[RMDB]
RNA sequence: GGGAACGACUCGAGUAGAGUCGAAAAUCGCCGCGCACCACGCACAGCAGAAGGACACCGCCACCGGUGCUGACGAUCAAGAGGUUCGUGCCAGCGUCGAGCAGGUCGAAACCGACGGGGGACGCGAGCAAUGACCCGCGCUCGUUCGGUCCUGCUCCCCGUAUACUGAAUUCGUUCAGUAUACGGGAAAAGAAACAACAACAACAAC
Reactivity to 2A3 in 0.01 (KOAc 150mM, MgCl2 10mM, bicine 150mM(pH8.5), 24C), signal-to-noise 5, nucleotides 027 to 156: u050c030g010c030c000g000c020g010c010a040c050c000a030c060g050c010a060c030a060g040c030a030g050a170a040g070g020a020c030a030c080c060g100c130c020a100c080c040g030g050u000g010c020u020g040a040c030g020a060u110c080a120a070g050a040g100g090u050u040c020g020u040g050c070c030a010g010c010g060u070c030g000a000g000c020a010g020g010u100c120g080a110a010a020c000c010g020a010c000g020g000g000g010g040a020c020g020c010g020a040g010c040a060a250u270g100a210c010c000c000g020c010g030c010u020c010g050u220u070c020g010g020u040c000c000u010g020c010u020c010
Reactivity to DMS in 0.01 (KOAc 150mM, MgCl2 10mM, bicine 150mM(pH8.5), 24C), signal-to-noise 2, nucleotides 027 to 156: u000c050g040c000c020g050c060g020c020a070c050c040a060c080g020c040a100c040a110g000c050a120g020a140a140g010g000a130c050a110c000c040g000c050c040a120c010c000g000g000u140g030c020u000g010a070c040g010a060u000c070a170a110g000a150g030g030u000u010c080g000u000g020c000c000a130g010c010g000u010c040g020a040g010c000a010g000g000u000c030g000a060a060a080c010c010g030a040c050g010g000g000g010g000a060c000g030c000g010a100g000c060a240a140u000g010a110c010c000c010g010c060g020c030u010c060g000u010u000c030g010g000u000c000c010u010g000c010u000c000
The record gives the reactivity of an RNA of 207 nucleotides to 2A3 and DMS. For 2A3 the reverse transcriptase was SuperScript II with manganese. The DMS profile rests on 3,755 reads. The RNA was probed in 150 mM KOAc, 10 mM MgCl2 and 150 mM bicine (pH 8.5) at 24 C.